[RMDB]
RNA sequence: GGGAACGACUCGAGUAGAGUCGAAAAGCAUGCACUCGAUGGCUGUGUGUGCGUGUGAAAGUAGUGAAAGCUGAAAGCCGAGGGCGAACGGGGCCAAUACUUAUGCUUAUGCAAGGCAGCCGAGAUGAUGCCAUUUUAUGUUCGCAUAAAAUGGCAUAAAAGAAACAACAACAACAAC
Reactivity to DMS in 0.01 (KOAc 150mM, MgCl2 10mM, bicine 150mM(pH8.5), 24C), signal-to-noise 4, nucleotides 027 to 126: g000c020a010u020g010c000a010c000u000c060g000a120u010g040g000c020u000g020u000g030u010g020u000g020c000g020u000g020u000g000a090a030a100g030u020a070g000u000g010a060a070a130g030c010u010g010a090a130a080g000c030c030g000a130g010g010g000c040g010a070a100c090g000g000g030g030c050c050a070a070u020a080c100u030u030a080u010g010c020u030u020a090u010g000c060a050a080g020g000c000a040g010c010c020g010a110g020a080u020g000
Chemical mapping of a 177-nucleotide RNA with DMS. For DMS, 9,565 sequencing reads were counted. For DMS the reverse transcriptase was MarathonRT.